[RMDB]
RNA sequence: GGGAACGACUCGAGUAGAGUCGAAAAUUGCCCAUUCACUUUCGGAAACUUGUGAAUGUGGUGUCAAAAAAGGCAUAAAUCAAAUUCUUUUGCAGCCAUUACUGCCCUUGAAUUUGGUUUCUUUGGCGAUAAGCAAUCACUUCGGUGAUUGCUUAUCAAAAGAAACAACAACAACAAC
Reactivity to 2A3 in 0.01 (KOAc 150mM, MgCl2 10mM, bicine 150mM(pH8.5), 24C), signal-to-noise 2, nucleotides 027 to 126: u090u060g030c000c020c000a000u020u000c000a010c010u050u120u070c050g190g080a130a120a110c060u060u060g000u010g010a000a000u040g060u170g000g000u040g090u050c050a000a100a050a070a100a010g070g000c030a100u100a200a080a000u050c010a010a010a000u020u000c000u000u000u000u050g000c000a020g000c100c020a080u100u200a050c010u000g000c000c000c000u010u020g020a020a010u020u010u020g070g000u010u010u020c020u000u050u050g100g070c070
Reactivity to DMS in 0.01 (KOAc 150mM, MgCl2 10mM, bicine 150mM(pH8.5), 24C), signal-to-noise 2, nucleotides 027 to 126: u010u000g000c010c010c000a030u000u000c020a020c030u000u010u000c260g010g010a140a130a160c130u000u000g000u000g000a000a020u000g010u000g030g030u000g000u000c040a000a080a140a060a100a080g030g020c110a070u000a000a040a030u020c010a020a030a030u000u020c000u010u010u000u010g000c000a020g000c080c170a180u020u010a180c010u000g010c000c140c050u000u000g010a060a020u000u000u000g000g000u000u000u000c030u000u010u000g010g000c190